[RMDB]
RNA sequence: GGGAACGACUCGAGUAGAGUCGAAAAAAACUUUUGUGACUUGCUGAAACGGGACUAAUCUCCUCACCGGGGCUAAGCAAGUAAAAUACGCCUCUCAUAUCCUUACCUGAGGGUGGUAAGGAAAUAACCUGCAACGCUUCCUUCGGGAAGCGUUGAAACUCACUCUACGAUUCGUCGUAGAGUGAGUAAAAGAAACAACAACAACAAC
Reactivity to 2A3 in 0.01 (KOAc 150mM, MgCl2 10mM, bicine 150mM(pH8.5), 24C), signal-to-noise 1, nucleotides 027 to 156: a000a000a000c120u260u220u080u070g090u030g110a040c000u050u000g010c000u050g010a140a070a000c010g000g000g000a010c020u060a150a080u050c050u080c040c020u090c000a100c040c020g000g000g030g000c000u040a060a000g010c000a020a010g060u070a010a130a000a000u100a020c030g060c050c000u000c000u000c030a050u070a050u240c000c000u010u000a030c000c020u050g030a040g010g130g000u040g000g000u020a030a000g020g000a000a000a000u030a020a000c040c020u050g000c000a000a020c000g000c000u010u000c000c000u040u110c140g020g000g000a000a000g000c000g000u000u000g000a000a000

Annotation: This 207-nucleotide RNA was probed chemically with 2A3. Conditions: 150 mM KOAc, 10 mM MgCl2 and 150 mM bicine (pH 8.5), 24 C. Values cover nucleotides 27 to 156.